RNA sequence: GGGAACGACUCGAGUAGAGUCGAAAACGUCAGGUGGCCCAGGACGUCGCUGACCGCCGCCCUGAGCGCCAUGCACUGCAUGGAGCCGGUCGUGCCGCUGGGACCCCGGUCCAGAUGGCGCGCGAACGGUGACGCCAUGGUUCGCCAUGGCGUCACCAAAAGAAACAACAACAACAAC
Reactivity to 2A3 in 0.01 (KOAc 150mM, MgCl2 10mM, bicine 150mM(pH8.5), 24C), signal-to-noise 1, nucleotides 027 to 126: c010g040u000c070a040g070g070u010g100g020c050c000c000a000g090g000a010c020g070u060c030g020c110u110g000a070c060c010g050c000c020g000c000c020c000u080g020a090g120c070g040c050c000a020u040g010c000a090c190u240g000c000a000u000g000g010a000g010c000c000g020g010u090c040g010u020g050c020c010g000c010u050g000g000g150a040c000c000c010c160g000g000u000c050c000a140g020a230u190g030g000c000g000c000g000c040g060a090a030c060
The record gives the reactivity of an RNA of 177 nucleotides to 2A3. The RNA was probed in 150 mM KOAc, 10 mM MgCl2 and 150 mM bicine (pH 8.5) at 24 C. It was measured as part of the RMDB library OK1LIB.